[RMDB]
RNA sequence: GGGAACGACUCGAGUAGAGUCGAAAAAAAAGCUUAUCUCGAUUUCGUCAAUGCGGGAGGUGCCCCAUUGACAAAUUGUGUUAAGAUGCUUACUCCUAAAACUGGUACAGGUAUAGCUAUAUCUGUUGAAGACUGGAGUUCGCUCCAGUCAAAAGAAACAACAACAACAAC
Reactivity to 2A3 in 0.01 (KOAc 150mM, MgCl2 10mM, bicine 150mM(pH8.5), 24C), signal-to-noise 9, nucleotides 027 to 129: a000a000a000a000g020c020u060u060a010u060c040u010c010g000a000u000u010u030c070g000u010c010a000a000u020g040c170g020g030g010a180g170g130u300g110c000c000c000c010a000u000u000g000a000c000a000a000a000u030u030g020u000g030u060u030a040a010g040a050u110g020c000u030u040a080c010u020c000c000u030a050a070a060a060c080u140g120g040u100a000c010a010g000g020u010a010u020a070g120c210u110a030u000a000u030c010u000g030u050u050g070a070a020
Reactivity to DMS in 0.01 (KOAc 150mM, MgCl2 10mM, bicine 150mM(pH8.5), 24C), signal-to-noise 4, nucleotides 027 to 129: a030a010a020a010g040c030u000u000a030u040c020u020c000g020a000u000u000u000c140g000u030c000a000a000u000g000c270g050g020g030a270g080g040u000g060c030c020c010c010a040u020u030g030a020c010a000a000a000u010u020g000u010g000u000u000a050a030g020a070u000g000c000u000u000a090c150u030c000c040u010a000a060a110a090c100u000g030g020u050a000c010a000g010g020u040a000u030a060g000c130u030a040u010a020u000c000u030g030u020u110g020a050a060
Record summary
The data come from the RNA Mapping Database (RMDB), library 15KLIB. This 170-nucleotide RNA was probed chemically with 2A3 and DMS. The RNA was probed in 150 mM KOAc, 10 mM MgCl2 and 150 mM bicine (pH 8.5) at 24 C. For 2A3, 22,349 sequencing reads were counted.